The record gives the reactivity of an RNA of 207 nucleotides to DMS and 2A3.
The 2A3 profile rests on 1,237 reads.
The data come from the RNA Mapping Database (RMDB), library OK3TST.
RNA sequence: GGGAACGACUCGAGUAGAGUCGAAAACAAAUCUAUAUGCGUCUGCAAUAGCAUAUAAAUCCACAAUUUCAGCGGUAUUAUUACAUGAUACUUUACGCGUAUACACAAAGUCUAAUAUUUUGCCGAAUAAAUGUGCAUCUGCUUCAAUUACAAAUGGUCCAAUAUCAGGGUUCGCCCUGAUAUUGGAAAAAGAAACAACAACAACAAC
Reactivity to DMS in 0.01 (KOAc 150mM, MgCl2 10mM, bicine 150mM(pH8.5), 24C), signal-to-noise 1, nucleotides 027 to 156: c010a060a130a040u020c020u010a010u000a020u000g030c010g020u010c140u000g000c110a190a220u000a150g000c000a010u000a020u000a000a020a080u000c020c010a060c120a120a190u010u000u000c070a080g020c000g040g000u010a040u000u000a070u000u000a100c090a220u000g040a180u010a060c010u000u000u010a060c120g020c080g010u000a040u010a100c030a060c040a070a060a090g010u000c100u000a030a080u000a030u000u000u010u030g090c000c070g020a070a020u000a020a050a130u010g010u030g000c080a070u010c050u000g000c030u000u000c020a050a140u000u010a170c080a020a150a140u000g040g030
Reactivity to 2A3 in 0.01 (KOAc 150mM, MgCl2 10mM, bicine 150mM(pH8.5), 24C), signal-to-noise 3, nucleotides 027 to 156: c030a000a140a040u050c020u040a010u010a010u010g010c000g080u060c160u060g030c010a120a030u040a100g000c000a000u000a000u030a020a070a050u080c080c020a060c030a170a150u060u090u090c040a040g050c010g040g010u030a010u050u030a030u030u100a060c030a050u160g010a030u050a030c000u050u100u060a050c060g050c030g050u060a030u060a100c040a000c040a020a080a030g010u010c070u140a100a060u000a120u100u120u090u070g000c020c030g010a010a030u090a070a040a020u060g020u030g000c000a060u010c020u070g020c000u030u100c060a060a100u150u090a090c030a090a070a090u000g090g000

The reactions ran in a buffer of 150 mM KOAc, 10 mM MgCl2 and 150 mM bicine (pH 8.5), at 24 C.